[RMDB]
RNA sequence: GGGAACGACUCGAGUAGAGUCGAAAAUUGUUCGUAGUUCUGGAGGUGAUAUGAACUUAGGAGCGAGGGAUGUCGAUAGAACAUUAGUGGAAAUGGUUUACGGCCGCACUAGCUCCCACGAGGUUGAGUUAAUAGAAAACUUCGGUUUUCUAUUAACAAAAGAAACAACAACAACAAC
Reactivity to 2A3 in 0.01 (KOAc 150mM, MgCl2 10mM, bicine 150mM(pH8.5), 24C), signal-to-noise 4, nucleotides 027 to 126: u060u040g020u020u020c020g020u030a050g030u060u010c020u060g080g040a070g000g080u070g040a030u030a050u190g040a030a020c000u020u040a070g000g020a020g020c020g000a070g000g030g010a010u060g010u010c010g130a170u020a080g050a030a010c010a040u050u100a110g140u120g190g060a070a060a060u050g010g010u020u040u020a020c020g030g000c020c020g020c030a020c010u020a030g000c010u000c000c010c000a040c070g050a040g060g020u060u060g020a030
Reactivity to DMS in 0.01 (KOAc 150mM, MgCl2 10mM, bicine 150mM(pH8.5), 24C), signal-to-noise 9, nucleotides 027 to 126: u010u010g010u000u000c050g020u010a060g000u000u000c040u000g010g010a100g010g000u010g010a100u010a060u010g010a040a050c040u010u010a080g010g010a020g010c030g010a060g000g000g010a120u000g010u000c010g010a150u000a040g000a020a030c020a020u000u000a110g020u010g020g010a070a050a030u000g000g010u000u000u000a060c050g010g000c010c090g000c070a040c020u000a090g010c030u000c010c000c080a100c170g010a060g010g010u000u000g000a220